[RMDB]
RNA sequence: GGGAACGACUCGAGUAGAGUCGAAAAAGGCAUCUUUUCGAAGAUGCCUGAUUAAUCCUAAGUCUCACUCUGGAACUACACACUUUGAUCUGUCGGAAACGACAGGGAGUGUGCCAGAAAGAUAUGGAAGGGACCACCCGGCUUCGGCCGGGUGGAAUUAAUUACGCUUAUUCGUAAGCGUAAUUAAAAAAGAAACAACAACAACAAC
Reactivity to 2A3 in 0.01 (KOAc 150mM, MgCl2 10mM, bicine 150mM(pH8.5), 24C), signal-to-noise 2, nucleotides 027 to 156: a010g000g010c000a000u000c000u000u090u110u190c270g050a020a000g010a000u000g000c000c000u000g000a000u000u040a070a060u030c000c000u010a150a040g020u020c000u010c010a100c030u000c020u010g000g060a040a080c110u300a030c040a000c000a000c000u160u110u130g150a160u120c000u010g000u000c000g010g000a050a070a130c030g010a000c010a000g000g020g000a010g010u010g010u010g020c010c010a000g020a020a040a000g010a000u020a030u090g030g020a050a040g070g020g040a000c000c010a000c000c000c000g040g010c020u010u040c120g070g000c000c020g070g000g000u020g000g000a000a020
Reactivity to DMS in 0.01 (KOAc 150mM, MgCl2 10mM, bicine 150mM(pH8.5), 24C), signal-to-noise 2, nucleotides 027 to 156: a020g030g020c000a000u020c010u000u000u010u010c260g050a050a000g020a010u000g010c000c000u000g010a040u000u000a140a150u000c010c000u000a120a240g010u010c050u000c060a070c110u010c030u000g020g010a110a140c050u000a260c000a010c000a010c000u000u000u010g020a070u020c010u000g000u000c010g020g010a210a120a230c000g030a010c000a010g010g000g000a010g020u000g030u000g000c000c040a090g010a120a090a050g010a150u000a200u010g010g000a180a130g000g010g000a160c000c020a060c000c000c020g070g040c030u000u010c300g050g050c000c000g010g050g050u000g000g010a010a020

An RNA of 207 nucleotides, treated with 2A3 and DMS and read out base by base.
For DMS, 4,043 sequencing reads were counted.
The 2A3 profile rests on 1,389 reads.